[RMDB]
RNA sequence: GGGAACGACUCGAGUAGAGUCGAAAAGAUAUGGAAUGCCCUUGCCGAGAGUCUAGCACGAAGACAGUCGAUCGGAAACGAUCGAUCGAGUGCUAGGACUCGUUUGACGCAAGGGCAUUCCUAAGUCCAUAACAGUCUAGUUCGCUAGACUGUUAUGAAAAGAAACAACAACAACAAC
Reactivity to DMS in 0.01 (KOAc 150mM, MgCl2 10mM, bicine 150mM(pH8.5), 24C), signal-to-noise 9, nucleotides 027 to 126: g010a060u000a250u010g000g000a030a010u000g010c000c000c000u000u000g020c010c020g000a090g010a020g010u000c000u000a010g010c000a020c000g020a110a140g010a150c300a090g000u000c000g000a010u000c000g000g000a080a070a090c000g010a010u000c000g000a010u000c020g000a100g020u000g010c000u000a020g020g010a030c000u000c000g010u010u010u010g010a190c300g000c000a010a000g000g010g000c000a000u000u000c000c000u000a010a060g000u000c030
Reactivity to 2A3 in 0.01 (KOAc 150mM, MgCl2 10mM, bicine 150mM(pH8.5), 24C), signal-to-noise 3, nucleotides 027 to 126: g010a000u080a030u120g000g010a000a000u010g000c010c010c030u000u010g040c040c040g240a150g000a010g120u000c000u010a000g020c010a010c030g120a160a030g060a040c040a020g060u020c000g000a000u010c010g010g020a030a050a020c000g010a000u000c000g000a000u030c010g020a020g000u010g010c000u010a020g020g020a010c000u010c010g000u140u090u300g060a020c010g000c010a000a000g000g000g000c000a000u000u000c000c000u000a000a010g000u030c000
The record gives the reactivity of an RNA of 177 nucleotides to DMS and 2A3. 2A3 adducts were read by reverse transcription with SuperScript II with manganese. Source: RMDB library TTRINS, as collected in RNAgym. For 2A3, 28,293 sequencing reads were counted. Values cover nucleotides 27 to 126. The RNA was probed in 150 mM KOAc, 10 mM MgCl2 and 150 mM bicine (pH 8.5) at 24 C.